Source: RMDB library OK2TRN, as collected in RNAgym. Chemical mapping of a 177-nucleotide RNA with 2A3 and DMS. For 2A3, 4,492 sequencing reads were counted. 2A3 adducts were read by reverse transcription with SuperScript II with manganese. DMS adducts were read by reverse transcription with MarathonRT.
[RMDB]
RNA sequence: GGGAACGACUCGAGUAGAGUCGAAAAGGCAGCGCUGGCCACGUCCUCCGCCACGGAGGCUUCUGCAGCGGACAGCUAUCCUGCCGUACAGCAGAACGGCGGCCACGAGGAGCAGCGGCUCAAUGGCCACUGUUGCUACGUUCGCGUAGCAACAGUGAAAAGAAACAACAACAACAAC
Reactivity to 2A3 in 0.01 (KOAc 150mM, MgCl2 10mM, bicine 150mM(pH8.5), 24C), signal-to-noise 2, nucleotides 027 to 126: g060g000c030a020g060c050g000c090u050g020g030c040c000a040c040g100u050c010c000u000c020c010g130c080c050a160c130g050g020a020g000g020c010u060u050c030u050g020c000a030g010c030g030g030a130c020a010g000c010u050a090u240c000c000u010g010c010c000g040u050a100c100a080g000c010a010g030a090a010c030g080g000c000g020g000c000c000a020c030g060a060g100g020a050g000c020a020g090c050g160g000c030u010c040a090a120u190g080g000c010
Reactivity to DMS in 0.01 (KOAc 150mM, MgCl2 10mM, bicine 150mM(pH8.5), 24C), signal-to-noise 5, nucleotides 027 to 126: g010g020c040a070g010c060g010c080u000g020g020c030c050a130c050g010u000c010c020u000c010c010g020c180c140a080c140g020g010a050g010g000c170u010u010c030u000g020c030a170g010c010g010g000a070c030a040g010c060u010a090u020c250c000u000g010c000c010g020u000a060c270a110g020c030a030g000a050a040c120g020g010c010g020g020c060c050a040c080g010a110g000g010a060g010c010a070g000c090g020g000c010u000c060a090a110u010g010g000c030